[RMDB]
RNA sequence: GGGAACGACUCGAGUAGAGUCGAAAACUUGGUGAGCGUAUAUAUGGAUGGCCUGGUCACGUAAUUGAUCUUGUAACGGUUUUCGCAACACUAUUUGGCUUGUCAACGUCUCUUGGAUUGGGUGUCUCACAAGUCAAUACUGGACUUUCAUAUGUUCCUACGCGGUACAAUUCGUUGUACCGCGUAGAAAAGAAACAACAACAACAAC
Reactivity to DMS in 0.01 (KOAc 150mM, MgCl2 10mM, bicine 150mM(pH8.5), 24C), signal-to-noise 1, nucleotides 027 to 156: c050u010u020g040g040u000g010a080g030c050g030u000a070u000a090u000a070u010g000g000a080u010g020g020c010c020u000g010g020u000c030a060c110g030u000a090a070u010u010g010a030u000c030u010u000g000u000a120a110c150g010g020u010u000u000u000c080g040c020a040a100c030a080c040u000a060u000u000u000g010g010c010u000u000g010u000c070a090a040c070g020u010c010u000c040u020u010g030g000a200u000u000g000g000g030u010g010u000c040u000c070a060c050a000a050g040u040c040a050a070u010a060c090u010g000g000a090c030u000u010u000c050a110u000a130u000g010u000u000c020
Reactivity to 2A3 in 0.01 (KOAc 150mM, MgCl2 10mM, bicine 150mM(pH8.5), 24C), signal-to-noise 4, nucleotides 027 to 156: c030u030u070g060g010u010g030a080g000c050g050u090a070u020a000u010a030u180g080g010a020u040g020g010c000c020u030g000g030u040c020a020c080g060u080a050a100u040u090g030a030u040c000u090u100g080u100a080a080c080g050g000u030u010u090u080c030g010c040a080a070c040a020c070u100a090u070u020u050g010g000c010u030u040g020u060c040a000a030c060g060u010c020u000c000u110u110g120g050a140u070u090g020g050g010u100g020u000c060u000c110a030c010a010a030g010u010c000a030a040u040a160c040u070g050g010a040c030u050u110u040c050a050u090a030u280g040u060u050c050

Source: RMDB library OK3TST, as collected in RNAgym. Structure probing data (DMS and 2A3) for a 207-nucleotide construct. For 2A3 the reverse transcriptase was SuperScript II with manganese. DMS adducts were read by reverse transcription with MarathonRT. The RNA was probed in 150 mM KOAc, 10 mM MgCl2 and 150 mM bicine (pH 8.5) at 24 C. For 2A3, 2,223 sequencing reads were counted.